Source information: Structure probing data (DMS and 2A3) for a 177-nucleotide construct. Conditions: 150 mM KOAc, 10 mM MgCl2 and 150 mM bicine (pH 8.5), 24 C. The 2A3 profile rests on 1,158 reads. DMS adducts were read by reverse transcription with MarathonRT. Reactivities are given for positions 27 through 126.
RNA sequence: GGGAACGACUCGAGUAGAGUCGAAAAAAAUUCAUAAGCUGCACUUGAGCAUCUGCAAAAAAAGGAAAAAAGGAAGUAAUGUCAUGUUGGCUGUCUGCAAGCUCAUGUGUUUCAGGGCCACCAUGGAACAUUGUGAGUUGUUCGCAACUCACAAUGUAAAAGAAACAACAACAACAAC
Reactivity to DMS in 0.01 (KOAc 150mM, MgCl2 10mM, bicine 150mM(pH8.5), 24C), signal-to-noise 2, nucleotides 027 to 126: a020a050a050u020u000c040a080u000a050a110g010c110u000g000c030a060c080u010u000g000a040g000c020a100u010c090u010g020c070a000a000a030a030a080a070a080g020g000a010a050a050a050a060a050g010g010a060a080g020u010a090a070u000g010u000c030a030u000g000u000u000g000g010c010u000g000u000c030u010g000c180a020a010g000c010u030c180a040u020g020u000g010u010u000u010c020a030g000g000g010c020c010a020c030c000a030u000g000g010a070
Reactivity to 2A3 in 0.01 (KOAc 150mM, MgCl2 10mM, bicine 150mM(pH8.5), 24C), signal-to-noise 2, nucleotides 027 to 126: a000a000a000u200u010c130a130u140a070a090g000c030u020g030c010a020c060u120u070g020a000g000c000a050u080c060u120g070c070a020a000a000a030a030a110a080g110g110a100a090a040a020a000a000g140g040a030a010g060u160a070a020u070g080u090c000a010u040g040u020u010g020g000c000u020g060u160c030u030g040c090a040a010g000c020u060c110a090u190g070u010g030u090u040u060c010a030g030g020g000c000c000a000c000c000a000u000g020g020a020